Conditions: 150 mM KOAc, 10 mM MgCl2 and 150 mM bicine (pH 8.5), 24 C.
The record gives the reactivity of an RNA of 207 nucleotides to DMS and 2A3.
The 2A3 profile rests on 795 reads.
[RMDB]
RNA sequence: GGGAACGACUCGAGUAGAGUCGAAAAGCUACUGAAAUGUGAACAUUUGAAAUUACAGGGGUUUGGGGCAAAUGCCAGUUUUCAGUCGUAUUUGACUGUUCUGCUUUCUGGUUUCAGUAAUUCGCCAAAAUGACGAACACAAAGGGAAAGAGGAGAGGACGUCUAGAUGUUUCGACAUCUAGACGUCAAAAGAAACAACAACAACAAC
Reactivity to DMS in 0.01 (KOAc 150mM, MgCl2 10mM, bicine 150mM(pH8.5), 24C), signal-to-noise 1, nucleotides 027 to 156: g030c050u000a110c010u000g000a030a030a070u000g010u020g000a100a060c050a100u010u000u000g010a080a070a150u010u010a130c080a070g000g000g010g000u000u020u020g000g020g000g050c080a050a100a040u010g000c030c010a010g050u000u000u000u000c010a030g040u000c020g030u000a130u000u000u000g010a050c000u000g030u010u000c000u010g000c060u000u010u000c090u030g000g010u010u000u000c030a070g010u000a030a180u000u000c050g040c020c030a000a030a070a080u000g000a020c050g040a030a070c070a080c110a090a050a120g000g000g030a060a030a050g000a070g010g000a030g010a070g000
Reactivity to 2A3 in 0.01 (KOAc 150mM, MgCl2 10mM, bicine 150mM(pH8.5), 24C), signal-to-noise 2, nucleotides 027 to 156: g000c020u050a020c020u030g050a000a000a060u140g010u040g080a120a030c020a110u170u150u140g100a110a130a080u190u140a100c060a050g020g000g000g050u090u090u120g040g030g010g000c020a070a000a020u070g010c010c000a000g020u030u010u020u140c000a000g000u010c020g040u150a300u120u190u140g040a030c020u000g010u030u080c010u050g060c000u010u140u030c020u040g030g000u000u070u040c010a000g000u030a000a100u050u080c050g020c020c000a050a050a050a050u110g030a040c020g010a050a000c060a020c070a160a030a020g040g000g000a050a080a000g010a040g030g000a010g000a020g080
For 2A3 the reverse transcriptase was SuperScript II with manganese. It was measured as part of the RMDB library OK3TST.